[RMDB]
RNA sequence: GGGAACGACUCGAGUAGAGUCGAAAAUUUUAGUACAGGCGAGUACACGCAGUAUAGUGCCACUUGUGUGAGAAUACUUUUAGUACAAGCGAGUACACGCAGUAUACUGCCACUUGUGUGAGAAUACAAUACGAUGCGAAUUCGUUCGCAUCGUAUUAAAAGAAACAACAACAACAAC
Reactivity to DMS in 0.01 (KOAc 150mM, MgCl2 10mM, bicine 150mM(pH8.5), 24C), signal-to-noise 3, nucleotides 027 to 126: u040u040u070u030a070g000u000a020c030a050g030g000c050g010a060g000u030a040c090a130c300g020c010a030g000u010a020u010a030g000u000g000c000c180a010c020u000u000g000u020g050u010g000a080g010a180a120u000a010c030u000u050u030u050a070g050u000a050c100a070a250g020c000g040a040g010u010a060c110a090c300g000c030a050g040u000a010u000a030c000u000g000c020c180a030c030u010u000g030u010g010u010g010a060g000a090a040u000a070c070
Reactivity to 2A3 in 0.01 (KOAc 150mM, MgCl2 10mM, bicine 150mM(pH8.5), 24C), signal-to-noise 3, nucleotides 027 to 126: u020u030u050u080a070g010u010a030c020a010g050g080c020g020a060g040u210a080c040a020c060g000c010a000g010u010a000u010a030g210u000g050c000c010a010c010u000u010g010u000g030u060g140a200g080a190a030u100a170c020u030u110u110u180a100g010u020a040c000a060a000g000c020g020a010g040u100a050c040a000c090g010c010a010g090u000a000u000a000c000u000g000c030c030a000c000u060u030g000u000g020u020g000a050g060a100a040u100a110c060
This 177-nucleotide RNA was probed chemically with DMS and 2A3. For 2A3 the reverse transcriptase was SuperScript II with manganese. Conditions: 150 mM KOAc, 10 mM MgCl2 and 150 mM bicine (pH 8.5), 24 C. Values are in units of 0.01, from 0 to 300, in steps of 10.